[RMDB]
RNA sequence: GGGAACGACUCGAGUAGAGUCGAAAACUUAGAAAUAAGACUACAGCACAUGAUGAUUGAAUUCUAUGAAUACGUGAUUAUAUUCUGUAUUCUUAAAGGGUUUGCAACACCUUUAUGAAUCCUGUCUUUGCACAGUUGUUUUCGAACAACUGUGCAAAAAAGAAACAACAACAACAAC
Reactivity to 2A3 in 0.01 (KOAc 150mM, MgCl2 10mM, bicine 150mM(pH8.5), 24C), signal-to-noise 1, nucleotides 027 to 126: c030u070u080a010g160a000a140a050u140a250a000g000a000c010u100a080c050a060g090c010a100c000a080u120g220a050u010g000a090u130u000g000a240a120u090u070c060u130a010u030g000a000a000u050a000c030g010u000g060a170u050u160a060u100a040u180u000c000u070g000u000a000u000u050c000u000u000a000a030a000g110g070g000u080u020u150g130c100a020a000c030a180c080c000u060u000u000a090u080g010a050a020u000c000c030u000g050u000c150u000